[RMDB]
RNA sequence: GGGAACGACUCGAGUAGAGUCGAAAAUUCGAGGAGCAUCAGUCCUUAAGCUUAGCAUACCUGCAUAUCACAAAAGAGGAAGCGUGAAAGCGUAACGACAGUACCUAGAUACGCAUAACUAAGCGGAUAUUAAUUUUAUUUUCGAAUAAAAUUAAUAAAAAGAAACAACAACAACAAC
Reactivity to 2A3 in 0.01 (KOAc 150mM, MgCl2 10mM, bicine 150mM(pH8.5), 24C), signal-to-noise 3, nucleotides 027 to 126: u070u050c060g000a040g020g030a040g050c020a080u070c020a010g070u040c000c000u040u080a090a030g000c000u010u030a010g000c000a030u010a110c020c010u030g010c020a010u020a030u120c020a020c010a090a060a030a000g120a010g020g060a130a030g020c000g000u070g030a080a040a010g040c010g020u060a070a010c020g090a020c050a030g070u040a030c010c000u010a020g000a030u070a020c030g010c010a040u060a240a060c020u020a060a030g030c020g030g010a040
Reactivity to DMS in 0.01 (KOAc 150mM, MgCl2 10mM, bicine 150mM(pH8.5), 24C), signal-to-noise 5, nucleotides 027 to 126: u020u020c050g020a090g000g000a070g020c090a080u010c080a090g010u010c010c020u000u020a100a140g000c010u000u000a050g010c120a080u020a110c160c170u000g020c020a050u010a020u000c050a110c120a070a060a100a090g000a080g010g000a110a150g020c020g010u000g010a100a100a140g010c030g020u020a040a100c100g000a060c130a080g010u040a090c030c020u010a060g010a080u000a020c060g000c020a010u010a090a080c050u000a040a050g000c010g000g010a140